RNA sequence: GGGAACGACUCGAGUAGAGUCGAAAAGUAUAAAAUCUGCAAGUAGUGCUAUUGUUGGAAUCACCGUACCUAUUUAGGUUUACGCUCCAAGAUCGGUGGAUAGCAGCCCUAUCACUAUCUAGGAGAAAAAACCCAGGACUGUUCGCAGUCCUGGGAACUUAGCAGAGAUGUUCGCAUCUCUGCUAAGAAAAGAAACAACAACAACAAC
Reactivity to 2A3 in 0.01 (KOAc 150mM, MgCl2 10mM, bicine 150mM(pH8.5), 24C), signal-to-noise 2, nucleotides 027 to 156: g050u010a070u070a300a170a020a030u070c050u140g030c040a070a070g010u090a020g020u070g000c050u040a020u090u080g040u010u010g050g000a050a070u080c020a020c060c040g070u070a050c000c000u070a170u250u210u300a050g000g020u040u070u060a010c020g000c010u000c000c000a010a000g000a040u100c130g030g090u080g160g110a020u010a010g060c070a020g000c000c020c000u000a030u000c010a010c000u010a000u000c010u020a040g000g010a030g000a080a020a000a010a030a000c000c000c010a000g010g000a000c000u000g110u120u070c190g010c070a000g020u000c010c010u010g000g010g010a000a000